[RMDB]
Source: RMDB library OK1LIB, as collected in RNAgym. This 177-nucleotide RNA was probed chemically with 2A3. The reactions ran in a buffer of 150 mM KOAc, 10 mM MgCl2 and 150 mM bicine (pH 8.5), at 24 C.

RNA sequence: GGGAACGACUCGAGUAGAGUCGAAAACGAUUGCGGCUGCAUUGGGAAAUUUAAUUCAAUUUCCGGUUGGCAAUCACAUAAAUCCUGCACUUUAUUGCAUCCGCAGUACGCAAUGCAUAGCCACAAGCUGGCCCUAGUCCUUCGGGACUAGGGCCAGAAAAGAAACAACAACAACAAC
Reactivity to 2A3 in 0.01 (KOAc 150mM, MgCl2 10mM, bicine 150mM(pH8.5), 24C), signal-to-noise 2, nucleotides 027 to 126: c000g160a010u000u000g010c000g000g010c040u000g000c010a010u240u300g090g000g060a030a030a030u150u220u020a110a250u180u240c020a000a000u000u000u070c000c000g000g000u060u100g160g030c020a030a020u180c000a000c000a100u300a080a040a110u090c000c000u010g120c050a040c070u060u250u260a050u000u180g000c000a000u000c060c050g000c000a000g070u050a300c000g000c000a020a020u000g080c000a070u160a030g090c030c130a000c000a160a000g080